[RMDB]
RNA sequence: GGGAACGACUCGAGUAGAGUCGAAAAUGGUGCGGUGAACAGCGCAUCGACGAAACCGUCCGCGAUUCCGGCCCGCUCACCUUGCGAGAACGGCCAGAGUUCGAUGAUUUCGACCCGCCCGACGAGCCCAUAGAGCUGCAUUCGUGCAGCUCUAUGGAAAAGAAACAACAACAACAAC
Reactivity to DMS in 0.01 (KOAc 150mM, MgCl2 10mM, bicine 150mM(pH8.5), 24C), signal-to-noise 3, nucleotides 027 to 126: u020g000g000u020g000c000g030g000u020g030a040a090c190a070g020c040g000c000a010u000c030g010a150c070g000a080a180a110c040c020g010u000c030c110g000c070g010a020u000u000c070c040g040g020c060c010c110g030c070u020c000a100c080c130u040u020g030c070g020a080g000a070a110c100g010g020c130c040a040g000a100g000u010u000c040g010a020u010g010a090u000u000u010c040g010a170c030c020c030g020c090c000c010g010a080c070g010a110g030c090
Reactivity to 2A3 in 0.01 (KOAc 150mM, MgCl2 10mM, bicine 150mM(pH8.5), 24C), signal-to-noise 7, nucleotides 027 to 126: u160g000g010u060g010c010g050g090u150g090a180a030c040a090g090c020g010c040a020u020c020g020a020c030g020a080a030a030c030c010g010u050c030c040g040c050g020a020u100u000c020c000g000g000c040c050c000g040c010u030c020a120c040c060u090u170g020c080g010a080g010a150a030c030g010g000c010c010a030g010a000g050u060u060c030g010a060u050g010a030u030u050u050c030g020a050c010c000c030g010c000c010c000g030a060c050g010a020g060c000